[RMDB]
RNA sequence: GGGAACGACUCGAGUAGAGUCGAAAAAUUACUGAAAGCUGGUAUAUGCGUUGGUUGAAACCCUAUGUGGACUUUGUUGCGCUUGAUCCGACCAAGCCAAUGGCAAUUAAACACUUGGUUAGAAUGGGCAAUUGGUAAUCUUCGGAUUACCAAUUGCAAAAGAAACAACAACAACAAC
Reactivity to DMS in 0.01 (KOAc 150mM, MgCl2 10mM, bicine 150mM(pH8.5), 24C), signal-to-noise 1, nucleotides 027 to 126: a070u000u010a080c070u000g000a030a090a150g020c060u000g000g000u000a040u000a080u000g000c020g000u000u000g010g050u000u000g000a080a110a120c050c020c060u020a050u000g040u010g020g000a090c140u000u000u000g000u000u000g000c100g000c040u000u000g000a060u000c040c050g020a040c100c000a030a020g020c000c020a030a040u000g000g020c130a010a040u010u030a040a080a050c130a060c040u010u000g000g010u000u010a050g010a080a110u020g000g000

The data come from the RNA Mapping Database (RMDB), library OK2TST.
Chemical mapping of a 177-nucleotide RNA with DMS.
Values are in units of 0.01, from 0 to 300, in steps of 10.
The reactions ran in a buffer of 150 mM KOAc, 10 mM MgCl2 and 150 mM bicine (pH 8.5), at 24 C.